Notes
Chemical mapping of a 177-nucleotide RNA with 2A3 and DMS. The data come from the RNA Mapping Database (RMDB), libraries RFM100 and RFMREP. The reactions ran in a buffer of 150 mM KOAc, 10 mM MgCl2 and 150 mM bicine (pH 8.5), at 24 C. Reactivities are given for positions 27 through 126.

RNA sequence: GGGAACGACUCGAGUAGAGUCGAAAAUGUGGCGCUAAGUAUAUCUUGUUUACCUUAUCUUUCUGUGGAAAAGUUUUGAUGUCUAGGUUUGUCACAUCAUGCCUGUUGCCUAGCACUACCAAAAGGGAGGGUCAUUAUGAUUCGUCAUAAUGACCCUAAAAGAAACAACAACAACAAC
Reactivity to 2A3 in 0.01 (KOAc 150mM, MgCl2 10mM, bicine 150mM(pH8.5), 24C), signal-to-noise 4, nucleotides 027 to 126: u030g000u030g010g000c000g000c080u100a070a040g080u060a120u030a020u210c040u050u120g040u100u150u060a050c010c000u040u090a100u120c040u090u120u010c030u080g160u170g090g030a010a050a040a100g000u010u010u090u060g060a100u050g040u090c000u000a010g020g040u040u070u260g030u100c030a000c010a010u090c040a050u180g030c000c020u070g050u140u070g000c000c000u000a010g020c010a030c040u160a140c000c040a040a070a030a040g020g070g020
Reactivity to DMS in 0.01 (KOAc 150mM, MgCl2 10mM, bicine 150mM(pH8.5), 24C), signal-to-noise 4, nucleotides 027 to 126: u010g000u000g010g010c000g020c070u010a080a080g010u020a090u010a060u010c110u000u000g000u020u020u010a110c040c030u010u020a080u000c040u000u000u010c080u020g030u020g010g010a060a030a040a070g000u010u000u010u000g010a050u000g010u020c040u000a060g000g010u020u030u010g010u010c030a030c080a000u010c080a080u000g020c020c020u000g030u010u000g000c030c010u000a060g010c060a020c060u010a120c080c060a050a050a080a060g000g000g000